This 207-nucleotide RNA was probed chemically with 2A3. For 2A3 the reverse transcriptase was SuperScript II with manganese.
RNA sequence: GGGAACGACUCGAGUAGAGUCGAAAAGAGGUAGGGGAAGCGUGUCGGUGCAGGCAAGAGACCACCGUAAGCGUCGCUGCAAACAUAUAAGCGCCGAUUCCAAUCAGCGCGACUACGCACUCGCUGCCUAAGUAGCGACUGCGUGUCUGUCAGUCCGCUGAGCACUUAUCUUCGGAUAAGUGCUCAGAAAAGAAACAACAACAACAAC
Reactivity to 2A3 in 0.01 (KOAc 150mM, MgCl2 10mM, bicine 150mM(pH8.5), 24C), signal-to-noise 2, nucleotides 027 to 156: g070a010g040g010u080a060g020g020g010g000a040a020g040c030g030u050g080u160c070g040g020u000g000c010a010g000g010c000a020a010g000a000g000a010c010c000a000c000c030g190u190a020a010g020c010g020u010c010g000c020u000g000c010a050a020a000c010a010u220a010u110a220a040g010c000g000c000c010g010a030u300u090c040c120a020a110u000c020a000g020c000g000c000g000a000c010u170a000c000g000c010a000c000u000c000g000c000u000g020c040c050u210a300a080g010u010a000g030c000g010a000c000u010g000c020g010u000g000u000c080u060g040u040c060a040g050u120c060c080g000

The data come from the RNA Mapping Database (RMDB), library RSTRND. Reactivities are given for positions 27 through 156.